[RMDB]
RNA sequence: GGGAACGACUCGAGUAGAGUCGAAAAGAAGAGCUUACUUGCAUUACAUUCCAAAGUACAACAGAUACGAAAAGAGACACAAGAACGUCCCAGUCCACGUCUCCCCAGCUUUCCGUGUCCAAGUUGGGCUACGGUAAUCCUUCGGGAUUACCGUAGCAAAAGAAACAACAACAACAAC
Reactivity to 2A3 in 0.01 (KOAc 150mM, MgCl2 10mM, bicine 150mM(pH8.5), 24C), signal-to-noise 3, nucleotides 027 to 126: g120a040a040g050a030g090c050u170u100a040c020u060u100g030c050a080u120u090a060c020a080u080u120c030c030a110a030a000g110u140a090c010a120a000c000a140g090a090u100a110c050g090a070a000a000a040g060a000g020a000c020a000c040a150a030g120a190a010c070g040u010c020c000c000a020g010u000c030c030a050c030g030u000c000u000c010c000c000c030a010g000c000u030u070u010c040c000g050u040g040u000c030c030a040a060g000u010u050g010g010
Reactivity to DMS in 0.01 (KOAc 150mM, MgCl2 10mM, bicine 150mM(pH8.5), 24C), signal-to-noise 1, nucleotides 027 to 126: g000a230a040g040a050g000c000u000u000a000c050u010u000g000c050a010u000u000a090c070a070u020u000c060c000a000a130a040g000u000a080c060a170a070c130a070g000a100u000a010c080g020a030a020a020a060g030a040g000a080c000a140c040a150a100g000a130a110c000g000u000c000c000c000a150g010u000c120c000a050c040g000u000c060u000c030c000c070c040a050g000c080u000u000u010c010c020g010u000g010u030c050c050a030a070g000u000u000g000g000
The record gives the reactivity of an RNA of 177 nucleotides to 2A3 and DMS. The DMS profile rests on 1,327 reads. The RNA was probed in 150 mM KOAc, 10 mM MgCl2 and 150 mM bicine (pH 8.5) at 24 C. Reactivities are given for positions 27 through 126.